[RMDB]
RNA sequence: GGGAACGACUCGAGUAGAGUCGAAAAGCUGAGAAAUUCGUUUCUCAGCACUGGAAAUAAAGGCGAAAGGCUAGCCAUUCCUUAUUUGGCGAAAGCCUGGCAUGAGCCUCCACUUCGGUGGAGGCAACAAGGCGAUAAGGUUCGCCUUAUCGCCUUGAAAAGAAACAACAACAACAAC
Reactivity to DMS in 0.01 (KOAc 150mM, MgCl2 10mM, bicine 150mM(pH8.5), 24C), signal-to-noise 3, nucleotides 027 to 126: g030c000u000g000a000g000a000a000a040u000u010c190g020u000u000u000c000u010c000a010g010c000a030c100u000g000g010a100a100a100u000a060a060a080g020g010c000g010a060a130a030g000g010c010u010a230g020c010c010a050u000u000c190c160u010u000a120u010u000u000g000g000c010g000a120a050a130g010c010c000u010g010g000c050a070u010g000a160g010c000c000u000c000c010a020c000u000u020c180g020g030u000g000g000a010g000g020c000a000a020
Reactivity to 2A3 in 0.01 (KOAc 150mM, MgCl2 10mM, bicine 150mM(pH8.5), 24C), signal-to-noise 3, nucleotides 027 to 126: g020c000u000g000a000g010a000a060a020u080u070c150g060u030u010u000c010u000c010a000g000c000a010c040u080g080g190a020a120a090u180a090a110a060g080g000c030g090a180a020a000g000g000c020u010a010g000c010c000a000u030u060c030c020u130u200a300u170u090u030g010g030c020g030a190a000a010g020c000c000u010g040g000c030a040u130g030a000g010c000c030u000c000c010a010c010u050u060c150g040g020u010g000g000a010g010g000c000a000a000
Overview
This 177-nucleotide RNA was probed chemically with DMS and 2A3. The reactions ran in a buffer of 150 mM KOAc, 10 mM MgCl2 and 150 mM bicine (pH 8.5), at 24 C. For 2A3, 2,307 sequencing reads were counted. For DMS, 3,131 sequencing reads were counted. For DMS the reverse transcriptase was MarathonRT. Source: RMDB library M2PK50, as collected in RNAgym.